[RMDB]
RNA sequence: GGGAACGACUCGAGUAGAGUCGAAAAGAUAUGGAUGCGACUGACAUGCCUAGUCUCGGAAACGAGAUAAGGCAACAGCACGCAUCCUAAGUCAAAACUAAACUUGAGCUUCGGCUCAAGUUUAGAACUUAGUACAGGAGUUCGCUCCUGUACUAAGAAAAGAAACAACAACAACAAC
Reactivity to DMS in 0.01 (KOAc 150mM, MgCl2 10mM, bicine 150mM(pH8.5), 24C), signal-to-noise 7, nucleotides 027 to 126: g000a030u000a290u010g000g020a000u000g010c000g010a300c020u000g010a250c290a160u000g010c010c000u000a300g010u000c000u000c000g010g000a080a080a160c000g010a010g000a000u000a070a030g000g000c000a020a060c010a020g000c050a070c000g000c000a000u000c000c000u000a010a070g000u010c010a080a070a110a190c000u000a000a000a000c000u000u000g000a010g010c000u000u020c240g030g000c000u010c000a000a000g000u000u000u000a000g010a060a150
Reactivity to 2A3 in 0.01 (KOAc 150mM, MgCl2 10mM, bicine 150mM(pH8.5), 24C), signal-to-noise 6, nucleotides 027 to 126: g030a020u050a030u140g000g000a000u000g000c010g020a040c040u020g030a060c060a300u150g000c000c010u040a110g030u000c000u000c000g020g010a080a060a040c010g000a000g010a020u030a070a050g030g000c020a060a030c000a010g090c130a030c050g000c000a000u000c000c000u000a040a010g010u000c020a020a000a140a180c000u010a000a010a010c000u000u000g000a000g010c020u050u160c300g070g000c000u000c000a010a000g000u000u000u000a000g000a010a000

Background
Structure probing data (DMS and 2A3) for a 177-nucleotide construct. 2A3 adducts were read by reverse transcription with SuperScript II with manganese. The RNA was probed in 150 mM KOAc, 10 mM MgCl2 and 150 mM bicine (pH 8.5) at 24 C. The DMS profile rests on 7,931 reads. DMS adducts were read by reverse transcription with MarathonRT.